[RMDB]
RNA sequence: GGGAACGACUCGAGUAGAGUCGAAAAGAUGUUAUGAGUGGUUCAUUAACUAUUGCCAACAGUGCAGCCAUUCAAGCUAAUGAUACUAACUUAAUAUUAUGGUUCCGUAAUGCUAGUGGUGGUGAACCCUGAGAUAACAGUUCGCUGUUAUCUCAGGAAAAGAAACAACAACAACAAC
Reactivity to 2A3 in 0.01 (KOAc 150mM, MgCl2 10mM, bicine 150mM(pH8.5), 24C), signal-to-noise 4, nucleotides 027 to 126: g040a000u110g010u120u050a070u140g040a010g100u040g010g030u050u060c020a010u030u060a070a030c040u050a100u130u110g060c020c010a130a080c040a240g060u110g230c040a010g020c020c010a030u060u100c050a030a000g000c010u050a100a010u080g060a030u070a090c010u040a160a020c010u090u100a090a060u090a110u210u100a090u090g010g000u040u000c030c000g000u100a060a030u110g020c030u030a020g050u020g100g020u040g010g030u050g030a040a030c010
Reactivity to DMS in 0.01 (KOAc 150mM, MgCl2 10mM, bicine 150mM(pH8.5), 24C), signal-to-noise 5, nucleotides 027 to 126: g000a070u000g020u010u000a030u010g010a090g020u000g010g010u000u000c030a020u000u000a040a050c050u000a090u010u010g010c030c040a110a140c200a090g020u010g020c060a050g010c130c110a080u000u010c170a070a040g020c030u000a020a050u000g000a090u010a050c040u000a050a050c030u000u000a020a050u010a040u010u010a070u000g010g010u000u000c030c030g010u000a050a050u000g010c040u000a050g000u010g010g040u000g000g020u010g010a050a080c140